[RMDB]
RNA sequence: GGGAACGACUCGAGUAGAGUCGAAAACAUUCAUUUAGUGCUAAGGAAUGGGCUAGGUGAUGGGAAUACAGCAUGAACCCUAAGAUACAGCCCCUGGCCUCAGGGCAUUUCUAGUCUGAUGGUAAGAUACCCUUCCUAAGUUCGCUUAGGAAGGGUAAAAAGAAACAACAACAACAAC
Reactivity to DMS in 0.01 (KOAc 150mM, MgCl2 10mM, bicine 150mM(pH8.5), 24C), signal-to-noise 4, nucleotides 027 to 126: c080a070u010u010c020a020u010u000u000a040g020u010g020c020u020a030a110g040g010a070a040u000g010g010g010c010u000a040g030g020u000g010a130u010g010g010g000a120a110u020a100c100a090g020c140a110u010g000a100a130c030c040c020u000a110a110g010a140u010a060c120a110g000c040c030c020c050u000g020g000c020c030u010c100a040g010g010g010c050a060u000u000u010c030u000a070g000u000c030u000g000a040u010g010g010u010a060a080g010a200
Reactivity to 2A3 in 0.01 (KOAc 150mM, MgCl2 10mM, bicine 150mM(pH8.5), 24C), signal-to-noise 3, nucleotides 027 to 126: c010a040u090u090c010a010u050u100u280a080g020u100g060c010u060a090a110g010g030a090a050u070g000g040g000c020u040a020g000g080u040g030a080u070g060g000g050a070a100u230a160c040a060g080c020a110u080g100a130a150c000c020c000u020a080a030g090a110u090a090c020a060g040c010c020c000c040u030g050g010c000c010u030c100a040g030g050g000c020a010u070u050u000c000u020a010g050u000c020u010g020a020u030g000g080u050a030a000g000a090
An RNA of 177 nucleotides, treated with DMS and 2A3 and read out base by base. The reactions ran in a buffer of 150 mM KOAc, 10 mM MgCl2 and 150 mM bicine (pH 8.5), at 24 C. 2A3 is a SHAPE reagent: it acylates the 2'-hydroxyl of flexible nucleotides of all four kinds. The 2A3 profile rests on 2,496 reads. For 2A3 the reverse transcriptase was SuperScript II with manganese. Values cover nucleotides 27 to 126.